Source: RMDB library OK3TST, as collected in RNAgym. Structure probing data (2A3 and DMS) for a 207-nucleotide construct. 2A3 is a SHAPE reagent: it acylates the 2'-hydroxyl of flexible nucleotides of all four kinds. The reactions ran in a buffer of 150 mM KOAc, 10 mM MgCl2 and 150 mM bicine (pH 8.5), at 24 C. For DMS, 6,945 sequencing reads were counted. 2A3 adducts were read by reverse transcription with SuperScript II with manganese.
[RMDB]
RNA sequence: GGGAACGACUCGAGUAGAGUCGAAAACACCCUCUGCCUCCUUCAGGUCAGCUAUGAUGAAUUGAGGUCUUCUGGUUCUUUGAUGCCUUAGAACAGGAGUCGGCAGACUUUCUCUGUGAAGGGUCAGAUAAUACUUGAGGCUUUGUGGGCUAUAUGAAUUAAUGACUGGAUUCGUCCAGUCAUUAAUAAAAGAAACAACAACAACAAC
Reactivity to 2A3 in 0.01 (KOAc 150mM, MgCl2 10mM, bicine 150mM(pH8.5), 24C), signal-to-noise 3, nucleotides 027 to 156: c080a070c010c000c000u010c030u010g020c020c030u060c050c010u080u070c010a030g040g070u020c000a010g050c070u150a100u240g060a060u030g020a110a200u130u090g030a020g040g020u010c000u030u000c010u030g130g020u040u000c020u050u100u060g080a080u250g140c030c030u040u040a050g030a100a010c010a030g010g020a020g050u030c010g060g040c050a030g020a010c010u090u170u050c070u050c020u070g080u030g060a020a020g010g000g040u020c000a010g010a060u130a080a060u100a170c050u060u100g040a030g000g000c000u080u060u130g040u070g030g000g020c020u050a040u080a050u300g100a070
Reactivity to DMS in 0.01 (KOAc 150mM, MgCl2 10mM, bicine 150mM(pH8.5), 24C), signal-to-noise 3, nucleotides 027 to 156: c040a120c020c000c010u000c040u000g000c000c030u020c030c050u030u000c020a140g020g030u000c020a080g030c080u000a110u010g020a100u000g010a100a120u010u000g010a070g010g010u000c040u000u000c020u000g010g020u000u000c010u000u020u000g000a130u000g010c110c010u000u000a090g010a080a110c030a060g010g000a060g010u000c030g020g020c100a070g010a050c030u000u000u000c050u000c050u000g010u000g020a070a070g010g020g010u000c040a080g010a080u000a060a160u000a060c070u000u010g010a060g030g010c060u000u000u000g010u000g010g020g000c020u010a130u010a110u000g010a140